[RMDB]
RNA sequence: GGGAACGACUCGAGUAGAGUCGAAAAGCUUGUGGACCUUAUGCCCACACAGCCAUCCUCUAGUAAGUUUGUAAGACGUCUGAUGACGUGUGGGAAAACACUAGAAAUAUUAACUUGCUGUAAAGCAAUAUCUGGAAGAGUUCGCUCUUCCAGAUAUAAAAGAAACAACAACAACAAC
Reactivity to 2A3 in 0.01 (KOAc 150mM, MgCl2 10mM, bicine 150mM(pH8.5), 24C), signal-to-noise 9, nucleotides 027 to 126: g010c000u010u010g000u010g010g020a050c030c060u170u200a150u300g030c010c010c000a000c000a000c050a010g000c000c000a060u020c000c000u010c000u000a010g020u050a210a140g010u020u030u050g120u100a060a020g060a020c000g010u000c060u160g290a210u300g000a060c010g010u100g100u130g060g060g070a020a030a000a000c020a000c000u010a000g060a030a070a010u190a050u110u130a110a130c080u070u090g000c010u040g080u170a190a060a000g000c000a010
Reactivity to DMS in 0.01 (KOAc 150mM, MgCl2 10mM, bicine 150mM(pH8.5), 24C), signal-to-noise 8, nucleotides 027 to 126: g000c010u000u000g020u000g010g010a030c040c230u030u030a140u040g020c030c000c000a010c000a000c180a010g020c010c040a210u000c010c010u010c020u000a010g010u010a110a060g010u000u010u000g000u030a280a150g000a020c000g000u000c010u020g020a220u040g010a010c000g000u000g010u000g010g010g010a140a020a020a010c020a050c010u000a000g000a100a080a100u020a090u020u030a100a100c200u010u000g010c000u000g010u030a070a100a040g010c020a060

Conditions: 150 mM KOAc, 10 mM MgCl2 and 150 mM bicine (pH 8.5), 24 C. Chemical mapping of a 177-nucleotide RNA with 2A3 and DMS. For DMS the reverse transcriptase was MarathonRT. It was measured as part of the RMDB libraries RFM100 and RFMREP. 2A3 adducts were read by reverse transcription with SuperScript II with manganese.